[RMDB]
RNA sequence: GGGAACGACUCGAGUAGAGUCGAAAAGAGCCUUUGGGCGGUGCGCAUCGUGAUUAUCUGGCGAUUGCCGCUUCACUGAAAGCACAGCUUCUGGCUGAUCUCAGUGAUCUGGAUGUGCUGAAUGGCGAGUCUCUUUCAGUUUCGACUGAAAGAGACUAAAAGAAACAACAACAACAAC
Reactivity to 2A3 in 0.01 (KOAc 150mM, MgCl2 10mM, bicine 150mM(pH8.5), 24C), signal-to-noise 3, nucleotides 027 to 126: g060a010g020c020c000u070u080u120g150g030g040c060g030g020u050g010c050g000c010a040u020c020g070u040g070a130u090u230a060u190c060u030g050g000c090g070a090u040u180g020c040c020g010c000u050u030c050a080c070u060g050a110a000a000g050c030a020c020a120g000c000u140u120c090u210g090g000c000u010g010a070u020c000u010c010a020g020u030g050a010u010c020u070g200g010a030u050g060u060g070c000u050g060a180a100u130g040g010c050g000
Reactivity to DMS in 0.01 (KOAc 150mM, MgCl2 10mM, bicine 150mM(pH8.5), 24C), signal-to-noise 3, nucleotides 027 to 126: g020a130g020c010c010u000u010u010g040g010g020c030g000g020u000g010c080g020c020a060u010c010g000u000g010a110u000u010a070u010c100u000g030g010c040g010a100u010u010g030c050c030g010c060u000u000c030a050c090u010g000a060a050a080g010c160a130c040a040g010c020u000u010c300u010g000g000c010u000g010a080u000c030u000c030a020g010u000g000a030u000c030u000g010g000a120u000g020u000g010c020u000g000a080a080u000g010g010c050g010